[RMDB]
Structure probing data (DMS and 2A3) for a 177-nucleotide construct. For DMS, 2,561 sequencing reads were counted. DMS adducts were read by reverse transcription with MarathonRT. High 2A3 reactivity points to a flexible backbone, as in loops and unpaired stretches. Conditions: 150 mM KOAc, 10 mM MgCl2 and 150 mM bicine (pH 8.5), 24 C.
RNA sequence: GGGAACGACUCGAGUAGAGUCGAAAAGAAAAGAAGCAGAGACGGUGGGCCAGCGUCUCUGGACUGGCCCUAAAACGCAAGGCAGGUCCUGCUGCGACAAGUAAAGAAAAAGCCUAAUGGCGAAAAAGGGAUAGAGAAUGUUCGCAUUCUCUAUCCCAAAAGAAACAACAACAACAAC
Reactivity to DMS in 0.01 (KOAc 150mM, MgCl2 10mM, bicine 150mM(pH8.5), 24C), signal-to-noise 2, nucleotides 027 to 126: g000a100a080a080a050g000a120a040g010c030a060g000a090g000a010c010g020g010u010g000g040g000c010c020a020g000c070g000u060c080u020c070u040g000g000a060c000u010g000g020c020c010c020u000a040a000a050a090c150g070c040a040a210g020g000c020a090g000g000u000c030c000u000g010c030u000g000c090g010a090c140a090a240g000u050a030a160a060g010a040a070a090a060a100g000c080c000u000a080a120u040g020g020c010g020a020a020a020a060a070
Reactivity to 2A3 in 0.01 (KOAc 150mM, MgCl2 10mM, bicine 150mM(pH8.5), 24C), signal-to-noise 2, nucleotides 027 to 126: g130a010a170a000a000g050a110a030g000c060a000g000a000g000a040c000g040g000u080g040g030g010c000c000a000g010c000g070u010c030u090c050u100g000g000a020c000u020g040g030c000c000c020u080a070a140a000a010c030g000c000a000a030g080g000c010a000g000g000u010c000c000u000g030c090u060g000c000g100a060c020a070a000g140u290a170a000a210g230a000a070a000a000a000g000c000c000u100a290a020u290g050g000c030g080a240a000a000a000a000